[RMDB]
An RNA of 177 nucleotides, treated with 2A3 and DMS and read out base by base. For 2A3, 6,175 sequencing reads were counted. Reactivities are given for positions 27 through 126. For 2A3 the reverse transcriptase was SuperScript II with manganese. High DMS reactivity at an A or C suggests that its Watson-Crick edge is free. It was measured as part of the RMDB library TTRINS. For DMS the reverse transcriptase was MarathonRT.
RNA sequence: GGGAACGACUCGAGUAGAGUCGAAAAGAUAUGGAUGCUACUCCCCACCUUACGAGCCUUGGACCGCUUGUUAUAUCGGAAACGAUAUAACAAGCGCUAGGCUCAGUAAGAGGUAGCAUCCUAAGUCCAUCUAAACCAUCUUCGGAUGGUUUAGAUGAAAAGAAACAACAACAACAAC
Reactivity to 2A3 in 0.01 (KOAc 150mM, MgCl2 10mM, bicine 150mM(pH8.5), 24C), signal-to-noise 2, nucleotides 027 to 126: g130a070u300a160u300g000g010a010u020g000c020u010a000c010u270c110c010c060c000a010c000c010u010u010a010c000g020a020g040c000c040u130u110g110g130a300c150c090g000c010u000u010g000u000u010a010u010a000u000c020g030g000a020a070a100c000g010a000u020a000u000a010a000c000a000a010g000c010g000c000u000a000g000g030c000u000c000a010g010u000a000a000g000a000g000g020u000a000g010c000a000u010c000c000u010a010a030g070u010c050
Reactivity to DMS in 0.01 (KOAc 150mM, MgCl2 10mM, bicine 150mM(pH8.5), 24C), signal-to-noise 4, nucleotides 027 to 126: g000a130u000a170u010g000g010a010u000g010c010u000a000c010u010c170c020c020c090a300c130c000u000u000a010c000g000a010g010c000c000u000u020g050g010a140c300c010g000c000u000u010g010u000u000a000u000a020u000c010g000g000a120a090a220c010g000a020u000a010u010a010a000c000a010a000g010c000g010c020u010a000g020g010c010u010c000a030g020u000a020a020g000a120g020g000u000a020g000c010a000u000c000c000u000a020a090g000u010c070